This 177-nucleotide RNA was probed chemically with DMS and 2A3.
[RMDB]
RNA sequence: GGGAACGACUCGAGUAGAGUCGAAAAGAUAUGGAACGAAUUAGGGAACUACAAACCAUGUCGGAAACGACAUCCCUUUGCCCUAACUAUUCCUAAGUCAAAAUCCGAUACGUUCGCGUAUCGGAAACCAAGUUCAUCUGUUCGCAGAUGAACUUGGAAAAGAAACAACAACAACAAC
Reactivity to DMS in 0.01 (KOAc 150mM, MgCl2 10mM, bicine 150mM(pH8.5), 24C), signal-to-noise 2, nucleotides 027 to 126: g000a070u000a300u010g010g000a020a050c160g000a060a120u010u000a000g000g000g010a110a000c140u020a290c080a010a020a030c180c210a020u000g030u000c000g020g000a040a060a140c000g000a020c020a000u010c070c110c040u000u020u000g000c000c000c000u020a000a000c080u000a300u000u010c000c000u000a010a110g010u010c020a010a080a100a190u000c000c000g000a010u000a000c000g010u000u000c260g020c010g010u000a010u010c000g010g000a020a020a110
Reactivity to 2A3 in 0.01 (KOAc 150mM, MgCl2 10mM, bicine 150mM(pH8.5), 24C), signal-to-noise 2, nucleotides 027 to 126: g000a020u010a010u090g010g020a040a070c080g040a270a260u010u030a030g020g010g010a140a130c100u150a090c300a000a070a020c080c070a020u020g010u010c000g000g000a000a030a020c000g000a010c000a020u030c000c070c000u000u000u000g080c050c000c010u020a020a030c070u110a180u100u020c010c010u060a130a040g050u020c050a070a010a000a300u030c000c000g010a000u000a010c010g030u000u100c300g000c000g140u000a000u030c000g000g000a000a000a000
Record summary: The 2A3 profile rests on 2,628 reads. The DMS profile rests on 880 reads. Conditions: 150 mM KOAc, 10 mM MgCl2 and 150 mM bicine (pH 8.5), 24 C.